[RMDB]
RNA sequence: GGGAACGACUCGAGUAGAGUCGAAAAGCUGGCGGCCGAGUACCCCAGCGUGUUCCGCUCGCUGCUGGGGAUUUCGUGGAUGUGGUUCUUUGGCGCGGUCUUCCUGUCGCAGUUCCCUGCGUUCGCCCUCUCCUUGACAUUUCGAUGUCAAGGAGAGAAAAGAAACAACAACAACAAC
Reactivity to 2A3 in 0.01 (KOAc 150mM, MgCl2 10mM, bicine 150mM(pH8.5), 24C), signal-to-noise 4, nucleotides 027 to 126: g050c040u050g040g010c020g020g000c010c030g020a010g020u170a170c000c010c000c000a000g000c010g000u020g000u050u050c020c000g070c050u060c010g010c050u170g010c000u010g010g010g040g020a040u030u100u070c060g020u080g050g040a110u060g060u080g050g060u060u030c000u090u070u120g030g010c060g010c020g030g000u000c000u070u030c010c010u040g030u050c020g000c050a030g030u020u020c010c000c010u020g030c040g020u010u040c020g090c010c000
Reactivity to DMS in 0.01 (KOAc 150mM, MgCl2 10mM, bicine 150mM(pH8.5), 24C), signal-to-noise 2, nucleotides 027 to 126: g000c030u000g000g020c090g000g000c030c050g000a090g000u020a190c010c000c010c010a030g010c000g010u000g020u010u000c040c060g000c050u030c070g000c020u010g010c000u000g000g010g000g010a080u000u020u010c020g050u000g000g000a090u030g020u000g000g010u000u010c020u000u010u000g020g000c040g020c100g000g000u000c050u000u000c030c020u020g000u010c050g010c050a120g010u000u010c020c010c000u000g000c040g010u000u000c010g040c090c060
This 177-nucleotide RNA was probed chemically with 2A3 and DMS.
2A3 adducts were read by reverse transcription with SuperScript II with manganese.
The data come from the RNA Mapping Database (RMDB), libraries RFM100 and RFMREP.
Values cover nucleotides 27 to 126.